[RMDB]
This 207-nucleotide RNA was probed chemically with 2A3. The data come from the RNA Mapping Database (RMDB), library OK3TST. The RNA was probed in 150 mM KOAc, 10 mM MgCl2 and 150 mM bicine (pH 8.5) at 24 C.
RNA sequence: GGGAACGACUCGAGUAGAGUCGAAAAGUAUGCGACAUCAAAGAUGAAAAAAUGUUAAGACUUAUAUAUUUAGAUAUAACACGAAUAUGUAUAACGGAUGGGAAUUGGUAACGAUGACAGAAAGCAGAUUGUCAGCUCUGCAUACUAUUCUUCAUGACCACACUAGGAGAUUCGUCUCCUAGUGUGGAAAAGAAACAACAACAACAAC
Reactivity to 2A3 in 0.01 (KOAc 150mM, MgCl2 10mM, bicine 150mM(pH8.5), 24C), signal-to-noise 1, nucleotides 027 to 156: g000u000a030u030g000c040g030a000c010a000u020c040a090a150a060g060a000u070g080a000a130a010a000a000a130u040g000u070u030a110a060g000a010c010u200u060a090u000a010u060a060u300u020u120a040g000a000u060a160u150a300a110c150a060c030g060a030a090u130a040u090g070u100a010u010a300a000c010g000g040a030u030g030g080g000a000a060u110u130g040g000u000a010a010c020g020a070u100g030a030c000a040g100a060a080a000g020c010a010g000a040u010u110g160u040c030a010g010c010u000c000u000g000c010a000u000a060c060u080a100u070u030c050u030u060c040a040u090g130a030